Structure probing data (DMS and 2A3) for a 177-nucleotide construct. Source: RMDB library OK1LIB, as collected in RNAgym. The RNA was probed in 150 mM KOAc, 10 mM MgCl2 and 150 mM bicine (pH 8.5) at 24 C. 2A3 adducts were read by reverse transcription with SuperScript II with manganese.
RNA sequence: GGGAACGACUCGAGUAGAGUCGAAAAACAUAAGGCGUUUAAGGAUCCUUGUCCGUAGUUGCGAAGGUUAUUUUGCACCUGAUCGCCUAUUGGCGAGAGGUUAUUCUGCAUCGCCGUGGACUUGAGGUAAAUGACCUCAUUUCGAUGAGGUCAUUUAAAAAGAAACAACAACAACAAC
Reactivity to DMS in 0.01 (KOAc 150mM, MgCl2 10mM, bicine 150mM(pH8.5), 24C), signal-to-noise 9, nucleotides 027 to 126: a110c060a080u030a090a100g010g010c040g020u010u010u020a170a070g010g000a030u010c020c000u000u000g010u010c000c030g010u000a020g020u030u030g010c010g020a070a060g000g010u010u010a130u020u020u030u030g020c170a030c010c000u000g000a160u010c020g010c000c000u010a060u010u020g010g000c000g000a030g000a090g010g010u030u030a040u010u010c030u000g010c230a100u010c020g000c010c000g000u010g010g010a120c130u010u010g000a090g010g010
Reactivity to 2A3 in 0.01 (KOAc 150mM, MgCl2 10mM, bicine 150mM(pH8.5), 24C), signal-to-noise 9, nucleotides 027 to 126: a000c050a040u260a100a100g040g000c060g030u060u110u140a040a020g020g010a030u060c010c000u010u030g020u020c010c010g020u010a020g060u090u200g000c010g010a030a020g080g020u090u080a210u110u200u220u200g110c050a010c000c000u060g100a190u010c000g000c000c000u040a080u050u150g000g000c020g000a050g010a030g100g000u060u050a050u100u010c010u020g030c030a040u040c010g000c000c000g020u050g020g010a050c000u060u100g060a060g120g060
For 2A3, 7,061 sequencing reads were counted.